[RMDB]
RNA sequence: GGGAACGACUCGAGUAGAGUCGAAAAUUGAGGCGGGCGGGUUGCGAGGGCGGGGCUUCCCUUAUUGUUCGGGAGCCUGAGCAAUACGCCGUUUCUCGCUCGUAAGAAUUCGAGGCUAGUUGGCCAAAACUCCCGGGACAUUCGUGUUCUGGGGGUUAAAAGAAACAACAACAACAAC
Reactivity to 2A3 in 0.01 (KOAc 150mM, MgCl2 10mM, bicine 150mM(pH8.5), 24C), signal-to-noise 1, nucleotides 027 to 126: u100u130g070a030g050g090c020g030g010g140c140g000g040g040u120u250g060c000g060a300g020g070g000c230g000g000g020g010c000u120u110c000c000c020u070u110a190u060u220g060u050u120c030g000g000g010a020g000c000c030u040g010a030g000c010a000a060u080a120c050g000c000c000g000u000u050u010c010u000c000g010c000u010c000g020u050a050a020g040a100a040u140u090c040g030a040g010g020c020u070a030g070u020u080g050g040c010c000a000a000